[RMDB]
RNA sequence: GGGAACGACUCGAGUAGAGUCGAAAAGAUGAGACAGACGACACGGCACUCAUCCCAGCUUACAUUGAAUCAGCUCGACAGUACGUCGUUAAUUCAGUCGGGGAUGAUCCAAAAUUUUACAACCUCGACAGUGUGAGAGCUUUGUUUGAUACGGCUGUCGAACAGGUAGGUUCGCCUACCUGUUCGAAAAAGAAACAACAACAACAAC
Reactivity to 2A3 in 0.01 (KOAc 150mM, MgCl2 10mM, bicine 150mM(pH8.5), 24C), signal-to-noise 2, nucleotides 027 to 156: g020a010u070g000a010g000a010c060a070g100a050c070g070a050c050a020c130g040g000c080a000c050u010c010a040u030c000c000c050a020g010c010u080u080a020c020a190u000u040g000a010a010u110c010a050g000c040u010c020g030a020c030a040g150u170a050c070g010u000c020g040u100u110a040a000u100u050c040a000g000u000c010g000g030g000g020a050u050g060a000u020c030c000a040a060a030a160u110u240u110u110a030c020a000a040c020c000u010c040g040a050c080a110g030u040g020u070g120a040g010a000g000c000u110u040u000g100u010u020u050g070a100u040a090c040g010g020c030u030g040
Reactivity to DMS in 0.01 (KOAc 150mM, MgCl2 10mM, bicine 150mM(pH8.5), 24C), signal-to-noise 2, nucleotides 027 to 156: g010a140u000g000a080g000a160c020a110g030a060c050g000a180c030a080c050g000g010c050a190c060u030c040a090u000c010c020c050a150g020c070u030u010a080c070a070u000u000g030a050a080u000c070a100g010c020u000c030g020a040c040a190g010u000a110c080g000u000c030g000u000u000a050a020u010u000c040a080g010u000c010g000g030g020g020a070u000g020a090u010c070c170a120a050a070a140u000u000u000u030a110c030a060a190c010c010u000c020g030a040c030a140g020u010g000u000g010a150g020a150g000c060u000u000u000g010u020u030u000g000a190u000a070c070g010g000c060u010g040
Conditions: 150 mM KOAc, 10 mM MgCl2 and 150 mM bicine (pH 8.5), 24 C. The record gives the reactivity of an RNA of 207 nucleotides to 2A3 and DMS. DMS adducts were read by reverse transcription with MarathonRT. For 2A3 the reverse transcriptase was SuperScript II with manganese. For DMS, 2,446 sequencing reads were counted. Source: RMDB library OK3TST, as collected in RNAgym. Values are in units of 0.01, from 0 to 300, in steps of 10.